Source: RMDB library OK2TRN, as collected in RNAgym. This 177-nucleotide RNA was probed chemically with 2A3 and DMS. For 2A3, 729 sequencing reads were counted. The RNA was probed in 150 mM KOAc, 10 mM MgCl2 and 150 mM bicine (pH 8.5) at 24 C.
RNA sequence: GGGAACGACUCGAGUAGAGUCGAAAAGUUUAGCCAGGUGGCAUAGAAUAUUGACCCAAGAAGACAUCACUAUAGAAACUGAUGCUAGUAUCCAAGGAUGGUUUGUCCCGGAGCCUUAUGAGGGGGACGCCACAAUCAUAUUCGUAUGAUUGUGGCGAAAAGAAACAACAACAACAAC
Reactivity to 2A3 in 0.01 (KOAc 150mM, MgCl2 10mM, bicine 150mM(pH8.5), 24C), signal-to-noise 1, nucleotides 027 to 126: g010u030u030u180a050g030c020c000a070g080g270u210g160g000c060a100u080a150g130a200a030u140a050u220u130g020a080c000c000c020a020a050g050a020a000g050a040c010a050u060c020a020c030u120a010u090a300g110a090a090a030c080u080g000a010u010g000c020u020a020g060u020a060u000c020c010a060a000g020g050a020u090g070g130u020u160u180g070u050c020c010c010g120g040a080g020c030c050u150u120a150u140g080a110g070g010g030g000g030a000
Reactivity to DMS in 0.01 (KOAc 150mM, MgCl2 10mM, bicine 150mM(pH8.5), 24C), signal-to-noise 2, nucleotides 027 to 126: g020u010u000u010a070g010c030c020a210g000g030u020g000g010c050a060u010a130g020a080a060u000a050u000u000g010a170c060c050c020a110a090g020a120a090g010a120c020a040u000c000a030c070u010a140u000a110g000a100a090a080c170u000g020a080u010g010c040u000a080g000u010a050u000c060c080a070a120g000g000a070u000g020g000u010u000u010g020u000c040c020c030g030g010a100g020c010c040u020u000a010u000g010a080g000g000g020g020g010a210